The record gives the reactivity of an RNA of 177 nucleotides to 2A3 and DMS. Conditions: 150 mM KOAc, 10 mM MgCl2 and 150 mM bicine (pH 8.5), 24 C. The 2A3 profile rests on 77,566 reads. For DMS, 45,907 sequencing reads were counted.

RNA sequence: GGGAACGACUCGAGUAGAGUCGAAAAACAAUGCUUUGCUAGAGCUGGUAAAAUGGAACCAAAUCGCCUCUUCAAUGGAUUUGGUCCCCUUCAACCAGCUGUAGCCCCGCAUUGAGGGGCAAAUAAAGAGACGUGUUCACUUCGGUGAACAUGUUUCAAAAGAAACAACAACAACAAC
Reactivity to 2A3 in 0.01 (KOAc 150mM, MgCl2 10mM, bicine 150mM(pH8.5), 24C), signal-to-noise 9, nucleotides 027 to 126: a000c010a010a010u020g010c010u060u070u080g000c000u010a010g010a000g150c000u000g000g010u050a080a100a050a060u110g010g000a010a010c000c000a000a000a000u060c070g220c080c050u180c090u300u180c140a130a250u280g080g000a000u000u000u000g000g010u010c040c020c000c010u030u030c030a040a040c000c000a000g000c000u000g000u000a000g000c000c000c000c020g000c010a020u010u030g020a070g040g030g020g030c080a040a050a090u200a030a100a010
Reactivity to DMS in 0.01 (KOAc 150mM, MgCl2 10mM, bicine 150mM(pH8.5), 24C), signal-to-noise 9, nucleotides 027 to 126: a100c010a020a010u000g000c010u000u000u010g020c000u000a010g000a010g010c000u000g000g010u000a050a070a070a040u010g010g000a110a010c000c000a000a010a000u000c020g010c120c090u030c180u040u040c220a110a070u040g010g000a010u000u000u000g000g000u000c020c010c010c050u000u000c230a160a040c000c000a000g000c010u000g010u000a010g000c000c050c140c060g000c020a020u000u000g000a120g010g010g000g000c300a040a040a050u040a040a120a100